[RMDB]
RNA sequence: GGGAACGACUCGAGUAGAGUCGAAAACCUAUCCAAAAUGAGAUCCCAUCUUGCACACUGUGCUAAUUUGAGAUUCUCAUGCCUCCUACUUGGAGAGAUCUGGACUAGAAGUCAGGGCAUGUGACUCAAUACAUUCGUCAGUUCGCUGACGAAUGAAGGUACGCUGAGAGUUCGCUCUCAGCGUACCAAAAGAAACAACAACAACAAC
Reactivity to 2A3 in 0.01 (KOAc 150mM, MgCl2 10mM, bicine 150mM(pH8.5), 24C), signal-to-noise 1, nucleotides 027 to 156: c000c000u050a080u070c020c040a000a100a160a230u020g030a000g050a160u000c040c090c000a030u020c090u050u050g000c000a060c050a090c210u170g080u060g000c020u100a000a290u100u020u040g040a020g050a080u150u030c020u060c010a000u010g000c000c000u090c000c000u210a300c170u120u180g000g050a040g000a000g000a060u030c010u050g050g120a020c000u020a030g060a190a000g060u090c070a010g050g020g050c020a000u070g010u050g020a060c000u000c030a000a000u100a130c030a030u000u000c000g020u000c000a000g010u000u190c160g000c050u000g000a000c000g020a020a000u000g000a010a000